Annotation:
Conditions: 150 mM KOAc, 10 mM MgCl2 and 150 mM bicine (pH 8.5), 24 C. The record gives the reactivity of an RNA of 177 nucleotides to 2A3 and DMS. For DMS, 2,131 sequencing reads were counted. High DMS reactivity at an A or C suggests that its Watson-Crick edge is free.
[RMDB]
RNA sequence: GGGAACGACUCGAGUAGAGUCGAAAACUUGGGCCUUGAGGUGCCCAGCUCCGCGCUUUCCGAUUUUGGGGGCCUUUCCAGAAAAUGUUGCAAAAAAGCUAAGCCGGCGGGCAGAGGAAAACGCCUGUCCACUUAAAAUCUUCGGAUUUUAAGUGGAAAAAGAAACAACAACAACAAC
Reactivity to 2A3 in 0.01 (KOAc 150mM, MgCl2 10mM, bicine 150mM(pH8.5), 24C), signal-to-noise 2, nucleotides 027 to 126: c010u030u050g020g000g010c010c010u110u070g150a060g120g010u090g050c000c000c000a000g010c030u040c000c050g080c010g000c040u050u060u000c070c040g100a200u040u040u120u160g030g000g000g020g020c000c040u000u030u000c000c000a020g090a040a150a000a050u200g030u120u050g020c040a030a190a000a050a050a050g000c010u050a030a000g010c000c020g010g020c000g000g010g000c040a080g020a040g080g030a050a080a000a000c020g030c000c000u020g040
Reactivity to DMS in 0.01 (KOAc 150mM, MgCl2 10mM, bicine 150mM(pH8.5), 24C), signal-to-noise 2, nucleotides 027 to 126: c040u010u000g000g020g010c020c020u000u010g000a190g050g010u020g030c000c010c030a020g000c040u000c030c030g000c070g040c090u000u040u000c030c020g010a080u020u010u010u000g000g010g020g000g020c040c020u010u000u000c030c010a130g000a100a070a130a070u030g010u010u000g050c030a000a070a090a120a150a100g010c020u020a080a080g000c000c030g030g040c070g010g020g020c000a090g000a080g000g010a020a050a090a070c110g000c010c020u010g020
The data come from the RNA Mapping Database (RMDB), library RFM100.